[RMDB]
The record gives the reactivity of an RNA of 177 nucleotides to 2A3 and DMS.
RNA sequence: GGGAACGACUCGAGUAGAGUCGAAAACCGGCUGUUCGAAAGAGCACGUGCCGGGCAGCCACGCACCACGGGGUAAGAGCUGAACGCAUCUAAGCUCGAAACCCACCUGGAAACGAGGAACCACCGACGUAAAUCGGAUAUUCGUAUCCGAUUUACGAAAAGAAACAACAACAACAAC
Reactivity to 2A3 in 0.01 (KOAc 150mM, MgCl2 10mM, bicine 150mM(pH8.5), 24C), signal-to-noise 6, nucleotides 027 to 126: c010c000g020g000c010u020g030u030u020c010g040a140a090a060g040a040g020c040a050c150g090u100g010c010c010g010g000g000c000a000g020c000c020a060c030g030c010a030c020c000a020c060g000g000g000g020u030a070a010g010a000g000c010u010g030a130a030c080g010c110a020u050c020u070a020a010g010c000u000c000g000a050a020a020c010c010c000a040c000c000u030g020g040a060a110a000c040g020a050g040g030a010a020c020c000a010c020c030g060a050
Reactivity to DMS in 0.01 (KOAc 150mM, MgCl2 10mM, bicine 150mM(pH8.5), 24C), signal-to-noise 5, nucleotides 027 to 126: c010c030g020g000c000u000g000u040u000c030g000a100a100a140g000a060g000c010a080c210g030u020g000c010c010g020g000g000c060a070g030c060c010a060c080g030c140a130c030c010a040c180g000g000g010g000u000a020a280g000a020g000c000u010g020a120a100c130g000c080a050u020c030u000a230a040g010c000u000c000g000a060a090a050c040c000c010a070c080c070u000g020g000a060a090a140c060g000a090g020g000a100a150c020c020a060c020c070g000a220
For 2A3 the reverse transcriptase was SuperScript II with manganese. Conditions: 150 mM KOAc, 10 mM MgCl2 and 150 mM bicine (pH 8.5), 24 C.